[RMDB]
RNA sequence: GGGAACGACUCGAGUAGAGUCGAAAACAGCCCGUCUUCGGACGGGCUGAAACCGGAAGCGGAAGCCGAACGGCAAGCCGAACCGGAACGGCAACGGCAAAAAAACCAUAAUGUUCGCAUUAUGGAAGUUUAAUCUUCUCUUCGGAGAAGAUUAAACAAAAGAAACAACAACAACAAC
Reactivity to 2A3 in 0.01 (KOAc 150mM, MgCl2 10mM, bicine 150mM(pH8.5), 24C), signal-to-noise 1, nucleotides 027 to 126: c010a020g010c070c000c000g000u020c010u010u020c100g080g030a000c000g010g030g040c000u010g000a010a000a000c020c010g000g020a130a100g030c000g010g000a010a030g000c000c010g080a190a090c200g030g000c010a020a030g010c020c000g010a020a010c000c000g000g020a020a030c000g010g000c030a030a030c020g020g000c000a000a030a050a050a000a000a090c020c000a000u000a000a000u000g040u060u060c260g000c160a000u000u000a000u010g000g030a020a020
Reactivity to DMS in 0.01 (KOAc 150mM, MgCl2 10mM, bicine 150mM(pH8.5), 24C), signal-to-noise 2, nucleotides 027 to 126: c010a020g000c000c020c000g040u000c000u000u010c240g060g000a010c010g020g000g040c000u010g000a000a070a050c030c000g010g000a020a250g020c000g010g000a030a050g010c000c030g010a180a130c150g010g040c010a020a180g010c000c000g010a060a110c010c000g000g010a110a110c080g000g000c020a020a050c050g040g000c200a000a000a050a050a050a080a110c010c000a000u000a010a000u000g010u010u020c170g030c010a010u000u000a000u000g000g000a030a050